RNA sequence: GGGAACGACUCGAGUAGAGUCGAAAAUCCUCUAUCUUCGGAUAGAGGAAAAGAGCUAGCAGGUACCGCUACCAAAGAAAAGGUACCAAGACGGAAACGUCAAAACGAAGGGGUUCGCCCCUUCGAACUACCAGGGUAAGUUCGCUUACCCUGGUAGAAAAGAAACAACAACAACAAC
Reactivity to DMS in 0.01 (KOAc 150mM, MgCl2 10mM, bicine 150mM(pH8.5), 24C), signal-to-noise 2, nucleotides 027 to 126: u000c000c000u000c000u000a000u010c000u000u020c160g060g000a000u000a010g010a020g010g000a000a010a090a060g020a090g000c280u000a020g010c000a140g000g000u000a010c000c010g010c020u000a030c040c060a080a110a130g030a080a070a050a110g010g000u000a020c000c010a120a060g010a000c000g000g010a090a070a090c000g010u000c000a100a030a090a220c000g010a010a000g000g000g020g010u000u000c210g010c000c000c000c000u000u000c000g000a030a110
Reactivity to 2A3 in 0.01 (KOAc 150mM, MgCl2 10mM, bicine 150mM(pH8.5), 24C), signal-to-noise 1, nucleotides 027 to 126: u010c000c010u000c000u020a000u000c000u010u040c090g060g000a010u010a000g000a030g000g010a030a030a000a000g060a010g030c080u020a010g020c110a150g020g000u000a000c000c000g000c010u030a050c030c080a090a080a030g150a020a080a020a010g020g000u000a000c000c010a020a040g000a000c000g010g050a030a060a030c010g000u000c050a030a000a000a080c000g000a010a000g010g000g030g000u030u120c200g100c000c000c000c000u000u010c000g000a010a020
This 177-nucleotide RNA was probed chemically with DMS and 2A3. The 2A3 profile rests on 3,194 reads. For DMS the reverse transcriptase was MarathonRT. For DMS, 1,446 sequencing reads were counted. Values cover nucleotides 27 to 126. 2A3 adducts were read by reverse transcription with SuperScript II with manganese. The reactions ran in a buffer of 150 mM KOAc, 10 mM MgCl2 and 150 mM bicine (pH 8.5), at 24 C.